[RMDB]
RNA sequence: GGGAACGACUCGAGUAGAGUCGAAAACGAACGGGCUCGCCGGGGCCGCUGUGUCGCGGUACGCCCAGACCAGCAGCUCACCCUGAUACAGCGUGCUGCCCUUGUACCCGCCCAGACUGCGGGCGUACCAUUGCGUACUAUUCGUAGUACGCAAUGGAAAAGAAACAACAACAACAAC
Reactivity to DMS in 0.01 (KOAc 150mM, MgCl2 10mM, bicine 150mM(pH8.5), 24C), signal-to-noise 4, nucleotides 027 to 126: c100g010a080a110c110g010g000g000c040u010c100g020c020c010g010g000g010g020c010c010g010c040u020g020u050g020u000c000g000c150g020g000u000a080c100g000c010c000c000a060g010a090c110c050a090g000c030a080g010c050u000c100a130c050c040c030u020g010a070u010a090c140a090g000c020g010u010g010c050u000g000c030c030c030u060u020g000u020a150c040c020c010g010c020c040c020a100g010a100c130u030g030c060g000g000g010c060g000u020a100
Reactivity to 2A3 in 0.01 (KOAc 150mM, MgCl2 10mM, bicine 150mM(pH8.5), 24C), signal-to-noise 9, nucleotides 027 to 126: c040g040a050a020c040g010g010g020c020u040c110g020c010c010g040g010g020g010c030c030g100c120u090g090u050g020u050c030g040c040g180g000u040a010c120g010c010c000c000a000g010a030c010c000a010g020c020a000g010c020u050c030a070c010c020c010u050g040a120u100a150c040a020g030c020g090u100g010c040u040g000c000c000c010u010u100g040u080a070c000c000c020g030c010c010c000a080g060a120c100u130g020c080g010g000g000c010g010u020a050